[RMDB]
RNA sequence: GGGAACGACUCGAGUAGAGUCGAAAAAGAUGCAAACACUGGAGAUUCGGCCGCUGAGCGGGACCAUCGGCGCGCAGGUGCGCAACCGCACGCUCGCCGACGUCGUCGAGAGCGGGCGCGCCGACGACUGCUGGUACUAGUUCGCUAGUACCAGCAGAAAAGAAACAACAACAACAAC
Reactivity to 2A3 in 0.01 (KOAc 150mM, MgCl2 10mM, bicine 150mM(pH8.5), 24C), signal-to-noise 2, nucleotides 027 to 126: a010g090a030u100g040c050a070a120a020c030a040c140u100g110g010a090g020a170u040u010c020g030g000c010c030g030c050u040g020a010g030c000g060g040g000a040c010c020a010u020c000g010g000c010g020c010g000c040a050g110g070u060g070c070g000c100a060a070c100c030g020c040a040c070g000c000u000c000g110c150c020g020a030c000g220u240c070g010u020c010g010a010g010a000g070c000g000g020g000c010g000c010g060c000c000g020a020c020g030a000
Reactivity to DMS in 0.01 (KOAc 150mM, MgCl2 10mM, bicine 150mM(pH8.5), 24C), signal-to-noise 2, nucleotides 027 to 126: a030g000a180u010g000c050a060a100a100c130a060c030u020g020g010a200g020a180u020u000c020g000g030c030c030g010c050u010g000a070g030c010g000g000g000a130c050c010a100u010c000g000g020c010g010c050g000c020a130g020g000u000g020c180g000c190a080a100c190c000g020c100a060c050g000c010u000c000g020c110c020g010a060c050g000u010c200g000u010c000g010a200g000a040g010c020g000g010g000c040g020c020g000c000c000g030a010c100g020a110

Conditions: 150 mM KOAc, 10 mM MgCl2 and 150 mM bicine (pH 8.5), 24 C.
An RNA of 177 nucleotides, treated with 2A3 and DMS and read out base by base.
Values are in units of 0.01, from 0 to 300, in steps of 10.